[RMDB]
RNA sequence: GGGAACGACUCGAGUAGAGUCGAAAAAUUGGCUUAAAAAUUCGCUCUUGUUUUUGACGUUAUAGCCUAAAGUGUUUCUCACGCUCCCUCCCCCAGUAACUGGCUCAAUAGCGUUUAAAGCGUCAUAAUCAUGGACAUCAUUCGUGAUGUCCAUGAUAAAAGAAACAACAACAACAAC
Reactivity to DMS in 0.01 (KOAc 150mM, MgCl2 10mM, bicine 150mM(pH8.5), 24C), signal-to-noise 2, nucleotides 027 to 126: a080u010u010g000g010c030u030u000a030a060a100a070a130u010u000c110g010c080u010c090u000u000g000u000u000u000u000u000g000a020c000g010u010u000a110u000a100g010c000c010u010a070a090a060g030u000g000u000u000u000c050u020c070a230c060g010c020u000c010c000c010u000c020c000c000c020c010a060g040u000a050a090c110u000g030g000c070u000c180a070a040u010a080g050c040g000u000u000u000a060a060a070g000c020g000u010c050a050u010a100